[RMDB]
Conditions: 150 mM KOAc, 10 mM MgCl2 and 150 mM bicine (pH 8.5), 24 C. Chemical mapping of a 207-nucleotide RNA with 2A3 and DMS.
RNA sequence: GGGAACGACUCGAGUAGAGUCGAAAAGAAAUUACGUUUCCUUUACACUUCUCAAACCGGGAUCAAGAGAAGCAAAGCAUCCCUCAUAUCCACGAUGGAGGGUGACGUGGAGUAUACUGUACCAAAAAGAGCGAACACGGCUUCGGCCGUGUUCGAACCAAUGACACAUGUUCGCAUGUGUCAUUGGAAAAGAAACAACAACAACAAC
Reactivity to 2A3 in 0.01 (KOAc 150mM, MgCl2 10mM, bicine 150mM(pH8.5), 24C), signal-to-noise 4, nucleotides 027 to 156: g050a010a080a010u210u100a030c060g010u000u030u050c010c000u020u050u090a050c060a040c010u050u000c020u010c030a160a130a100c080c070g010g060g000a050u040c070a190a000g020a020g030a030a020g050c060a010a050a020g050c010a050u070c000c030c000u050c010a050u080a050u060c040c040a020c090g040a050u100g050g040a040g020g020g010u020g020a000c020g020u020g010g010a020g020u030a020u020a090c060u080g090u090a060c050c020a000a100a000a010a030g100a030g070c000g000a000a000c000a010c000g010g000c010u030u060c210g060g000c000c000g000u000g000u000u000c000g000a000a010
Reactivity to DMS in 0.01 (KOAc 150mM, MgCl2 10mM, bicine 150mM(pH8.5), 24C), signal-to-noise 2, nucleotides 027 to 156: g000a080a050a120u000u000a130c100g000u000u000u000c000c000u010u000u010a120c060a080c000u000u000c010u010c030a060a120a120c120c070g010g020g030a070u000c090a080a300g010a040g000a060a060g030c030a100a060a170g040c050a090u000c000c000c000u000c020a090u000a100u000c000c050a040c140g000a120u000g020g000a050g020g030g040u000g000a070c050g000u000g000g020a090g020u000a090u000a030c080u000g050u010a110c000c050a000a050a050a060a110g030a160g000c000g000a030a000c000a010c020g000g070c010u000u020c300g010g020c000c010g070u000g010u000u000c030g050a010a070

Annotation: The data come from the RNA Mapping Database (RMDB), library M2RFPK. DMS (dimethyl sulfate) methylates the pairing face of unpaired adenines and cytosines. The 2A3 profile rests on 3,436 reads.